[RMDB]
RNA sequence: GGGAACGACUCGAGUAGAGUCGAAAAAUCAACUGAAAACGGUACCACAACCACUUGCAUCUAAAUUGUUAAUUACAGGUACUGUACGAUUCGUCAAAGCAGACAGUGUAGAUCCGAGCAAGGAGGGACCUAAUAAUAGUUUCGACUAUUAUUAGGUAAAAGAAACAACAACAACAAC
Reactivity to 2A3 in 0.01 (KOAc 150mM, MgCl2 10mM, bicine 150mM(pH8.5), 24C), signal-to-noise 9, nucleotides 027 to 126: a000u100c060a030a070c070u140g060a060a040a020a050c030g020g020u030a020c010c000a050c050a080a070c020c020a030c050u020u050g000c020a080u020c060u190a080a150a120u140u070g060u110u160a140a120u130u110a070c030a050g020g040u040a060c000u020g020u040a030c080g070a100u030u120c040g050u050c080a060a060a060g010c020a020g030a070c010a030g020u010g020u130a030g010a070u030c050c030g020a010g020c020a040a010g050g010a090g040g020g030
Reactivity to DMS in 0.01 (KOAc 150mM, MgCl2 10mM, bicine 150mM(pH8.5), 24C), signal-to-noise 9, nucleotides 027 to 126: a070u020c070a110a100c130u020g000a050a050a090a070c070g010g000u000a050c010c010a120c160a080a100c070c050a110c050u000u010g010c060a070u010c090u030a070a060a070u010u010g000u010u010a060a080u020u020a060c150a050g010g010u010a030c010u000g010u010a060c200g010a070u010u020c090g000u010c060a060a060a130g010c100a070g000a050c040a040g000u010g010u010a030g010a060u010c120c100g000a060g000c040a050a060g000g000a080g000g000g000